The record gives the reactivity of an RNA of 207 nucleotides to DMS and 2A3. Reactivities are given for positions 27 through 156.
RNA sequence: GGGAACGACUCGAGUAGAGUCGAAAACACUUUGGAGGGAGUGGGCAAGUUUCGAGAAAAAAACGGCGUUCUCGUCUCUUGGACGAUAGAACAAGAGUAUAAGGGAGGUGUGCCUCAUGGAAAGUAUCGAGUCUUCCAAUGUCGAGAAGGGAGGGAACCUUCGGUUUUAAUUCGUUAAAACCGAAGGAAAAGAAACAACAACAACAAC
Reactivity to DMS in 0.01 (KOAc 150mM, MgCl2 10mM, bicine 150mM(pH8.5), 24C), signal-to-noise 2, nucleotides 027 to 156: c030a070c070u000u000u000g020g000a110g000g000g000a180g040u000g000g000g070c050a080a100g040u000u010u000c000g020a140g020a010a000a060a070a050a080a100c070g000g010c090g010u000u000c030u000c010g000u010c000u010c040u000u010g020g020a170c020g010a160u000a070g010a080a200c040a010a030g000a040g080u000a110u000a050a120g000g000g030a100g000g020u000g040u000g000c040c000u000c070a080u020g010g000a050a040a070g010u010a300u010c050g030a050g000u000c040u000u000c000c000a060a020u000g000u000c010g020a110g020a060a090g020g040g000a090g000g010g000a040a100
Reactivity to 2A3 in 0.01 (KOAc 150mM, MgCl2 10mM, bicine 150mM(pH8.5), 24C), signal-to-noise 2, nucleotides 027 to 156: c040a000c020u100u120u120g030g010a050g010g010g000a060g020u060g000g010g000c040a060a040g020u010u060u050c070g020a070g120a000a130a010a010a010a020a040c070g060g000c040g030u020u000c020u000c000g020u010c010u020c010u010u050g030g020a020c030g100a100u120a140g020a040a010c010a040a000g020a010g040u110a050u050a180a060g040g040g010a040g000g010u060g040u060g080c000c000u030c010a020u090g020g050a110a080a030g040u050a090u100c030g000a020g080u010c010u020u010c010c020a050a060u110g010u080c030g010a020g020a090a010g020g010g020a060g000g010g020a020a020